[RMDB]
RNA sequence: GGGAACGACUCGAGUAGAGUCGAAAAGGAGAAUAUAUAGUUUAUAUUGAUGUAAUAAUUGGUUAUUUGCAUCGCGGUACAGAAAAGUUAUGUGAAUAUAAAACUGUAGAACAGUGUUUACCGAUGAAGACUGGAUUAUGUGAGUGUCGUUUGCAACGGCACUAAGUUCGUUCGCGAACUUAGUGCCAAAAGAAACAACAACAACAAC
Reactivity to 2A3 in 0.01 (KOAc 150mM, MgCl2 10mM, bicine 150mM(pH8.5), 24C), signal-to-noise 1, nucleotides 027 to 156: g000g000a050g040a150a000u020a000u050a020u070a050g050u030u100u000a150u010a040u030u060g020a000u060g000u040a020a070u060a040a080u160u090g050g010u000u150a030u020u070u020g000c010a000u000c020g030c000g020g000u140a020c020a020g140a030a210a000a000g070u010u020a040u050g050u040g040a000a020u120a000u010a030a100a010a060c040u010g000u040a030g050a160a050c020a020g000u000g050u150u110u100a010c010c000g000a030u060g010a020a060g030a010c020u020g040g020a000u000u110a100u120g080u010g050a080g040u040g050u080c050g010u000u000u040g140c080a060a010c060

The data come from the RNA Mapping Database (RMDB), library PDB130. An RNA of 207 nucleotides, treated with 2A3 and read out base by base. The 2A3 profile rests on 538 reads. Conditions: 150 mM KOAc, 10 mM MgCl2 and 150 mM bicine (pH 8.5), 24 C.